[RMDB]
RNA sequence: GGGAACGACUCGAGUAGAGUCGAAAAGAUAUGGACGUGACCUGAGGCAACAGCUCGGAAACGAGACAUGCCUUUGGGUACGUCCUAAGUCAAAAGGGAUGCGAAUUGUUCGCAAUUCGCAUCCCAAGCAUAAUUAGUGCUUCGGCACUAAUUAUGCAAAAGAAACAACAACAACAAC
Reactivity to DMS in 0.01 (KOAc 150mM, MgCl2 10mM, bicine 150mM(pH8.5), 24C), signal-to-noise 4, nucleotides 027 to 126: g010a050u010a300u000g000g000a020c000g000u000g000a030c000c000u000g010a020g000g010c000a020a090c290a180g000c000u000c000g000g000a060a120a210c010g000a010g000a040c090a240u010g010c000c000u000u010u010g010g020g000u000a010c000g010u000c000c000u000a000a090g000u000c040a080a050a090a160g000g000g020a000u000g000c000g010a030a010u010u000g000u000u010c200g000c010a010a000u000u000c000g000c000a010u010c000c000c010a020a020
Reactivity to 2A3 in 0.01 (KOAc 150mM, MgCl2 10mM, bicine 150mM(pH8.5), 24C), signal-to-noise 2, nucleotides 027 to 126: g020a010u090a050u170g000g000a010c010g000u050g210a090c000c000u020g020a020g000g000c010a040a050c040a300g040c010u020c000g000g040a080a050a040c020g000a000g030a040c030a060u080g000c000c000u030u060u040g000g010g010u010a000c000g000u010c000c000u000a000a010g010u000c030a030a010a040a120g020g000g000a000u000g000c000g000a000a010u010u010g050u090u100c300g000c160a010a000u010u000c000g000c000a000u000c000c000c000a000a000

An RNA of 177 nucleotides, treated with DMS and 2A3 and read out base by base. The reactions ran in a buffer of 150 mM KOAc, 10 mM MgCl2 and 150 mM bicine (pH 8.5), at 24 C. 2A3 adducts were read by reverse transcription with SuperScript II with manganese. Reactivities are given for positions 27 through 126.